[RMDB]
RNA sequence: GGGAACGACUCGAGUAGAGUCGAAAAUGUAUUCUAUUCGUAGAAUACAAGAGUGAAACGCCGUAGCGCCGAUGGAAGUGUGGGGUCUCCCCAUGCGAGAGAACAUUGCCAGGUUCGCCUGGCAAAACACCUGCGUUUAGUUCGCUAAACGCAGGUGAAAAGAAACAACAACAACAAC
Reactivity to DMS in 0.01 (KOAc 150mM, MgCl2 10mM, bicine 150mM(pH8.5), 24C), signal-to-noise 1, nucleotides 027 to 126: u000g020u000a000u000u000c000u010a030u000u000c140g050u000a020g000a020a000u000a000c000a020a060g000a160g020u000g000a070a110a100c050g000c020c070g010u000a070g020c070g000c040c030g010a050u000g000g000a040a110g010u000g040u000g000g000g000g020u000c210u010c000c010c030c020a000u000g010c030g010a140g010a120g030a090a120c140a090u010u000g000c000c000a000g000g000u000u010c300g010c000c000u010g010g000c000a000a000a040a100
Chemical mapping of a 177-nucleotide RNA with DMS.